This 177-nucleotide RNA was probed chemically with DMS and 2A3. The DMS profile rests on 4,799 reads. The reactions ran in a buffer of 150 mM KOAc, 10 mM MgCl2 and 150 mM bicine (pH 8.5), at 24 C.

[RMDB]
RNA sequence: GGGAACGACUCGAGUAGAGUCGAAAAAAUAUGCUCGACAGGCUGCCUGUCCGACAGAGCUAUUAGAUCUUCUGAUCUUUCCCUGCAGCAUAUCGCUUAUGCAUCAAGCGAUUGUCGGAUCACACAAUUAUCAGUACCUGUUCGCAGGUACUGAUAAAAAAGAAACAACAACAACAAC
Reactivity to DMS in 0.01 (KOAc 150mM, MgCl2 10mM, bicine 150mM(pH8.5), 24C), signal-to-noise 5, nucleotides 027 to 126: a050a030u000a010u010g010c000u000c020g010a140c160a090g010g010c020u000g010c040c250u010g010u010c010c010g000a020c030a110g000a030g010c010u000a040u000u010a020g010a010u010c000u000u010c300u010g020a000u000c000u000u000u000c000c000c000u000g010c050a020g010c020a110u000a040u000c010g000c010u010u000a070u020g000c250a120u010c150a040a000g000c010g000a020u000u000g010u000c010g020g000a120u020c200a090c180a090c210a060a080
Reactivity to 2A3 in 0.01 (KOAc 150mM, MgCl2 10mM, bicine 150mM(pH8.5), 24C), signal-to-noise 3, nucleotides 027 to 126: a000a000u110a050u090g000c010u010c020g090a070c080a060g080g000c010u010g050c010c050u150g060u040c000c000g000a010c000a020g030a000g000c010u000a040u010u030a010g010a010u000c030u230u040c120u300g010a010u000c000u020u030u010c010c000c010u020g030c010a020g010c010a020u030a020u110c000g000c020u020u050a080u240g140c070a120u140c090a060a000g000c000g010a030u010u020g020u030c020g000g050a090u120c010a030c030a020c020a100a220